[RMDB]
RNA sequence: GGGAACGACUCGAGUAGAGUCGAAAAACGCGAGGAGUAAGAUCGUAGCGAUGGGGGGAGAUGCUAGGAGUUAGAGGAGACCGAAGCGAGGAGGAAAGUAAAGAAAGCAACGGGGCUAGCCGAGGGGGAUAUAUUGGAAGUUCGCUUCCAAUAUAUCAAAAGAAACAACAACAACAAC
Reactivity to 2A3 in 0.01 (KOAc 150mM, MgCl2 10mM, bicine 150mM(pH8.5), 24C), signal-to-noise 2, nucleotides 027 to 126: a000c040g010c030g010a060g030g010a020g030u110a060a000g020a110u100c030g010u070a010g040c010g020a060u040g020g010g000g010g030g020a020g000a020u090g000c010u020a030g050g030a060g040u000u080a030g020a040g060g020a050g010a020c040c050g000a040a000g000c020g020a030g010g020a020g010g030a080a010a000g050u100a010a050a050g040a040a060a000g000c010a000a030c040g000g000g000g000c020u030a010g010c010c010g010a040g000g000g010g000
Reactivity to DMS in 0.01 (KOAc 150mM, MgCl2 10mM, bicine 150mM(pH8.5), 24C), signal-to-noise 3, nucleotides 027 to 126: a080c080g020c080g000a130g010g010a050g010u000a100a110g010a050u000c040g010u000a200g010c040g010a080u000g010g000g000g000g010g010a050g010a050u000g000c080u010a090g000g010a070g010u000u010a110g010a100g010g000a130g010a070c050c030g010a080a070g010c120g020a050g010g000a070g000g000a060a030a060g000u010a040a060a090g000a030a050a090g000c050a040a090c090g010g000g010g030c080u010a070g010c040c030g000a050g000g000g000g000